An RNA of 177 nucleotides, treated with DMS and 2A3 and read out base by base. Reactivities are rounded to 0.1 and cut off at 0 and 3. The reactions ran in a buffer of 150 mM KOAc, 10 mM MgCl2 and 150 mM bicine (pH 8.5), at 24 C. DMS adducts were read by reverse transcription with MarathonRT.

RNA sequence: GGGAACGACUCGAGUAGAGUCGAAAAGGGUUAGCGUUCGCGCUAACCCCAGGAUCGAACAUGACAAAUCUCGCAGACAUGAAACGAUCAAAAGCGAGAAAACUAGACAGUCAUUCGUGACUGUCAAAUGAAUGGAAAAGUUCGCUUUUCCAUUCAUAAAAGAAACAACAACAACAAC
Reactivity to DMS in 0.01 (KOAc 150mM, MgCl2 10mM, bicine 150mM(pH8.5), 24C), signal-to-noise 6, nucleotides 027 to 126: g000g010g010u000u000a000g010c000g020u000u020c240g020c010g020c000u000a000a000c000c000c000c050a050g010g010a040u000c010g010a120a230c040a030u000g010a160c170a060a110a100u010c010u000c010g020c020a100g010a120c080a030u000g010a080a070a130c090g000a040u010c070a040a040a130a140g010c020g000a030g000a040a060a080a080c180u010a090g000a010c000a010g000u000c000a050u000u010c200g010u000g000a030c000u000g000u000c000a020a080
Reactivity to 2A3 in 0.01 (KOAc 150mM, MgCl2 10mM, bicine 150mM(pH8.5), 24C), signal-to-noise 6, nucleotides 027 to 126: g020g000g000u000u000a000g000c010g010u030u040c250g010c000g000c100u000a000a010c000c000c000c010a030g080g020a040u040c030g040a050a040c020a080u100g100a050c050a060a150a120u040c020u020c020g020c020a030g040a150c000a040u080g070a130a140a060c060g020a020u060c060a080a120a000a000g020c010g010a010g000a020a050a010a050c070u060a050g000a010c000a000g000u000c000a010u050u070c110g040u010g000a000c000u000g000u000c000a000a010